[RMDB]
RNA sequence: GGGAACGACUCGAGUAGAGUCGAAAAGAGUACAUAUGCCCAGCCUUACUGUUACGGCUGGAUGCUUCGUGCAAAUGCUAUGUACGCCUACGUAUAUGUGCGUAGAUGCCUAUAUUUUCUCUCCUGAGAAAAUAUAGAUGCAUACAAAGUAAAUGCAACUACUCAUAGCUUUCGAGCUAUGAGUAGUAAAAGAAACAACAACAACAAC
Reactivity to 2A3 in 0.01 (KOAc 150mM, MgCl2 10mM, bicine 150mM(pH8.5), 24C), signal-to-noise 8, nucleotides 027 to 156: g070a020g010u010a020c020a010u050a030u290g010c000c000c010a010g010c000c010u200u200a210c130u250g140u300u120a070c080g000g000c000u010g000g000a020u090g000c020u060u140c140g140u180g030c020a050a070a100u160g000c000u000a000u020g000u000a010c000g040c000c000u010a010c010g050u060a100u030a070u260g190u050g050c000g010u010a020g020a140u050g000c000c010u000a000u000a000u000u000u000u000c010u000c010u060c070c200u160g020a000g000a000a000a000a000u000a000u000a000g020a020u110g000c000a000u050a050c040a030a110a030g070u110a020a100a060u100g030c040a040
Reactivity to DMS in 0.01 (KOAc 150mM, MgCl2 10mM, bicine 150mM(pH8.5), 24C), signal-to-noise 3, nucleotides 027 to 156: g010a140g000u000a090c070a070u000a070u010g030c030c000c010a030g010c010c010u000u010a170c140u010g030u000u000a100c280g000g000c010u020g020g010a040u000g010c030u010u000c080g000u010g020c010a030a080a300u020g020c010u000a050u010g030u000a010c010g020c000c000u000a000c020g030u000a090u000a120u000g040u010g030c040g010u000a040g000a080u010g030c050c000u000a000u000a000u000u000u000u000c000u010c020u000c230c230u020g000a030g010a030a010a010a010u000a000u000a000g000a070u010g040c020a030u000a100c040a090a110a090g020u000a030a040a300u000g020c030a140